[RMDB]
RNA sequence: GGGAACGACUCGAGUAGAGUCGAAAACGACAGCAUGUAUUCCAUUCUUAGAAAACGAUGACUCAAACCGUGCAUUGAUGGGUGCGAACAUGCAACGUCAAGCAGUGCCUUUGAUGAAUCCAGAAGCGUUCAGGACAUUAUUCGUAAUGUCCUGAACAAAAGAAACAACAACAACAAC
Reactivity to 2A3 in 0.01 (KOAc 150mM, MgCl2 10mM, bicine 150mM(pH8.5), 24C), signal-to-noise 9, nucleotides 027 to 126: c050g050a010c020a020g020c020a040u060g030u100a140u090u050c030c030a030u060u060c040u090u170a070g120a060a090a020a020c050g030a040u050g070a100c010u030c090a050a100a170c070c030g070u070g030c060a190u010u040g020a030u060g050g080g070u030g020c030g050a070a060c060a080u160g000c030a030a010c030g030u020c010a010a010g020c020a010g060u050g110c030c030u080u050u060g050a080u050g020a040a060u020c040c050a050g050a190a010g110c040
Reactivity to DMS in 0.01 (KOAc 150mM, MgCl2 10mM, bicine 150mM(pH8.5), 24C), signal-to-noise 3, nucleotides 027 to 126: c070g000a050c120a040g000c040a020u000g000u010a130u010u010c020c040a010u040u010c020u000u000a110g020a100a120a060a050c200g010a020u020g000a260c190u030c070a080a030a100c210c140g010u000g000c090a060u000u030g000a040u010g000g000g050u000g030c050g030a060a090c150a090u010g000c010a000a110c030g000u010c020a020a060g000c030a140g020u020g000c060c030u000u000u000g010a050u010g010a140a080u000c010c050a050g000a070a120g050c190